[RMDB]
RNA sequence: GGGAACGACUCGAGUAGAGUCGAAAAUGGGAAGAGUAUAUCCUAUGGGAAUCCCUGCGUCCCUCUCGUGUCCAGCCCCUCCCCGUGUCUAUGGAAGGGGGACUCCGGGACGCCUUGCAUGCUGGGGCGUAGGACAGGAGUUCGCUCCUGUCCUACGAAAAGAAACAACAACAACAAC
Reactivity to DMS in 0.01 (KOAc 150mM, MgCl2 10mM, bicine 150mM(pH8.5), 24C), signal-to-noise 2, nucleotides 027 to 126: u010g020g000g010a050a090g010a170g020u010a070u010a090u000c010c030u000a030u000g020g020g000a200a130u000c020c000c000u000g010c110g020u000c010c000c000u000c070u000c200g020u020g000u000c050c080a090g010c040c000c010c010u010c030c030c020c090g010u010g020u020c190u010a120u010g020g020a060a050g000g010g000g010g020a020c010u000c070c170g020g020g010a010c090g000c010c100u000u000g000c100a030u000g010c050u010g010g000g010g030
Reactivity to 2A3 in 0.01 (KOAc 150mM, MgCl2 10mM, bicine 150mM(pH8.5), 24C), signal-to-noise 1, nucleotides 027 to 126: u050g030g020g020a030a000g080a030g240u100a090u010a060u190c030c040u060a080u030g070g020g040a070a130u080c010c000c010u000g010c060g010u030c000c000c000u020c020u020c050g090u060g060u010c040c010a080g040c100c000c000c000u050c030c010c000c020g040u070g040u060c130u150a140u100g050g000a010a020g000g000g000g010g000a000c000u030c020c010g040g020g000a000c000g000c000c000u090u130g060c010a050u030g010c000u030g000g000g000g000
Record summary
Source: RMDB library VIROID, as collected in RNAgym. Structure probing data (DMS and 2A3) for a 177-nucleotide construct. 2A3 adducts were read by reverse transcription with SuperScript II with manganese. The DMS profile rests on 1,923 reads. The RNA was probed in 150 mM KOAc, 10 mM MgCl2 and 150 mM bicine (pH 8.5) at 24 C. The 2A3 profile rests on 1,303 reads.